[RMDB]
RNA sequence: GGGAACGACUCGAGUAGAGUCGAAAAAUAAACUUUAUGGAUUUUAGAGUUAGAGCAUUUCUGUAACUCCAUCAGUGCAUACAAUUGAGUGUUAGUUUUUACCUAAAAGUUACGAUGAGAAGUGUGGAAACUUCCUCUCAUUCGUGAGAGGAAGUUUAAAAGAAACAACAACAACAAC
Reactivity to DMS in 0.01 (KOAc 150mM, MgCl2 10mM, bicine 150mM(pH8.5), 24C), signal-to-noise 1, nucleotides 027 to 126: a080u000a080a100a060c010u010u010u010a070u010g000g010a180u040u000u000u000a010g010a010g010u000u000a050g010a170g010c150a070u010u000u010c050u010g010u000a030a030c030u000c070c070a040u010c080a030g010u010g000c070a060u000a040c120a090a120u010u030g000a040g000u020g030u000u020a130g060u000u000u020u000u040a150c090c000u010a030a070a100a110g010u000u000a030c070g040a070u010g040a120g000a000a000g020u000g020u000g030g010